[RMDB]
RNA sequence: GGGAACGACUCGAGUAGAGUCGAAAAGAAGGCACUUUCGAGUGCCUUCAUGGGGAGCUCAGGUCUCCGUCCCUUGCAAACUCCCUAAGGGAGGAGACCUAAUUAGGUGCACUUUCGAGUGCACCAAUUGUCUUAGUUAGUUCGCUAACUAAGACAAAAAAGAAACAACAACAACAAC
Reactivity to 2A3 in 0.01 (KOAc 150mM, MgCl2 10mM, bicine 150mM(pH8.5), 24C), signal-to-noise 5, nucleotides 027 to 126: g010a000a000g000g020c030a000c020u070u090u180c260g090a010g010u000g000c010c000u000u010c000a000u000g000g000g010g010a050g060c060u070c200a000g030g010u000c000u030c010c000g300u130c010c000c010u000u010g060c080a130a060a200c060u100c010c020c010u090a010a020g010g000g000a000g000g000a000g000a000c000c000u000a010a040u090u100a050g000g000u000g000c010a000c000u060u060u090c240g090a010g000u000g000c000a000c000c000a000a010
Reactivity to DMS in 0.01 (KOAc 150mM, MgCl2 10mM, bicine 150mM(pH8.5), 24C), signal-to-noise 9, nucleotides 027 to 126: g010a010a010g000g010c010a000c000u000u000u010c170g020a020g030u000g010c010c000u000u000c010a040u010g000g010g000g010a200g020c150u000c100a010g010g000u000c000u000c000c000g010u010c000c000c000u000u000g010c180a080a080a200c160u010c020c020c020u010a030a020g000g000g020a300g000g000a010g010a010c000c000u000a010a030u010u000a040g010g010u000g000c000a020c000u000u000u010c170g000a010g010u000g010c000a010c000c000a010a020

Chemical mapping of a 177-nucleotide RNA with 2A3 and DMS. Values cover nucleotides 27 to 126. It was measured as part of the RMDB library M2PK50. The DMS profile rests on 15,275 reads. The RNA was probed in 150 mM KOAc, 10 mM MgCl2 and 150 mM bicine (pH 8.5) at 24 C.